[RMDB]
RNA sequence: GGGAACGACUCGAGUAGAGUCGAAAAGCACUUUUCCAUAUCCAUCACUAUGGUGUCCUUGUCAUAAUCAAAGGAGAUUGCUCCGGUAGGACAGUCUGGAAUGCACAUUUGACACUUUUUACAGUUCCACGGUCCAUAGCUUCGGCUAUGGACCGUGAAAAGAAACAACAACAACAAC
Reactivity to 2A3 in 0.01 (KOAc 150mM, MgCl2 10mM, bicine 150mM(pH8.5), 24C), signal-to-noise 2, nucleotides 027 to 126: g040c040a010c020u020u020u040u060c020c000a050u060a040u100c020c040a040u110c030a070c180u150a030u130g120g000u030g020u000c000c030u010u010g070u110c040a110u030a150a050u080c070a030a060a070g080g000a120g010a070u020u050g020c060u010c020c020g100g000u030a020g020g010a010c000a000g030u000c010u030g050g100a100a040u070g000c100a010c000a140u040u060u220g000a000c000a020c040u000u030u020u040u210a130c100a200g060u030u020c020

Structure probing data (2A3) for a 177-nucleotide construct. Source: RMDB library OK1LIB, as collected in RNAgym. The reactions ran in a buffer of 150 mM KOAc, 10 mM MgCl2 and 150 mM bicine (pH 8.5), at 24 C.